The record gives the reactivity of an RNA of 177 nucleotides to 2A3 and DMS. It was measured as part of the RMDB library OK2TST. 2A3 adducts were read by reverse transcription with SuperScript II with manganese.
[RMDB]
RNA sequence: GGGAACGACUCGAGUAGAGUCGAAAAGGCUGGCCAUGCGGGCACGCUCGAUCCGCUUGCUUCGGGCAUGUUGCCCAUCGCGCUUGGCGAAGCCACGAAGACGGUGCCUUAUGUCAUGGACGGAACAGUCGUAUGACCUCUUCGGAGGUCAUACGACAAAAGAAACAACAACAACAAC
Reactivity to 2A3 in 0.01 (KOAc 150mM, MgCl2 10mM, bicine 150mM(pH8.5), 24C), signal-to-noise 1, nucleotides 027 to 126: g030g000c000u020g000g000c000c000a000u000g020c070g000g010g010c010a010c000g030c020u000c020g090a130u050c030c020g060c080u040u130g010c000u030u050c020g000g000g090c050a120u150g040u080u150g060c010c000c010a050u090c100g130c040g000c070u030u040g030g000c020g030a060a000g010c000c000a010c040g020a040a010g060a020c040g000g090u050g040c000c000u080u180a130u140g100u130c000a030u000g010g000a020c000g030g040a130a060c050a030
Reactivity to DMS in 0.01 (KOAc 150mM, MgCl2 10mM, bicine 150mM(pH8.5), 24C), signal-to-noise 2, nucleotides 027 to 126: g010g000c000u000g000g000c020c000a000u010g010c050g040g010g010c000a000c020g020c020u000c020g020a130u000c060c050g040c160u010u010g000c040u000u000c030g000g000g000c020a110u000g010u000u000g030c000c020c090a050u000c160g040c140g010c130u000u010g000g020c020g010a030a090g010c020c130a120c060g020a070a070g000a040c050g000g000u010g030c020c020u010u010a090u000g020u000c050a020u000g010g000a050c020g030g000a080a050c130a140